[RMDB]
RNA sequence: GGGAACGACUCGAGUAGAGUCGAAAAUGAGUAAAAACACUAACAACACAUCAUCUAAAAACACCAAAGAUGAUAUUGACCAUGAACUAUACAGUCUUAAAUAUUUCUUUAAAUUAGCAGCAGAUGGUGAAACUGUAGCAUUGGAUAUGCUCCACACUGUCAACACAAGAUUCGUCUUGUGUUGACAAAAAGAAACAACAACAACAAC
Reactivity to DMS in 0.01 (KOAc 150mM, MgCl2 10mM, bicine 150mM(pH8.5), 24C), signal-to-noise 2, nucleotides 027 to 156: u020g000a170g040u000a080a090a140a110a070c040a140c050u000a080a120c040a100a130c080a070c140a000u000c000a010u000c010u010a020a100a050a090a090c060a060c070c040a060a210a030g000a040u010g000a030u000a050u000u000g020a100c050c010a140u040g020a160a120c020u010a140u030a030c020a100g000u010c040u000u010a090a050a100u000a090u010u010u010c000u000u010u000a040a080a090u000u000a130g040c010a030g000c020a020g040a150u000g020g020u020g010a140a070a020c000u000g020u000a160g020c110a070u020u000g000g000a110u000a180u000g020c010u010c010c050a070c120a150c110
Reactivity to 2A3 in 0.01 (KOAc 150mM, MgCl2 10mM, bicine 150mM(pH8.5), 24C), signal-to-noise 3, nucleotides 027 to 156: u080g000a020g070u120a020a050a040a040a010c040a010c080u120a150a050c040a050a040c040a020c030a090u010c000a000u000c000u070a070a020a020a080a050c090a040c050c050a080a090a010g000a010u030g000a000u000a060u020u100g020a020c030c020a090u070g040a050a050c040u040a060u070a210c030a020g000u000c000u060u140a070a110a050u100a090u130u100u080c000u000u060u000a070a140a120u080u060a030g000c020a000g000c000a000g010a040u040g020g030u000g000a060a020a050c040u050g010u040a010g000c020a020u020u080g040g010a050u040a000u260g000c000u050c040c010a070c000a010c010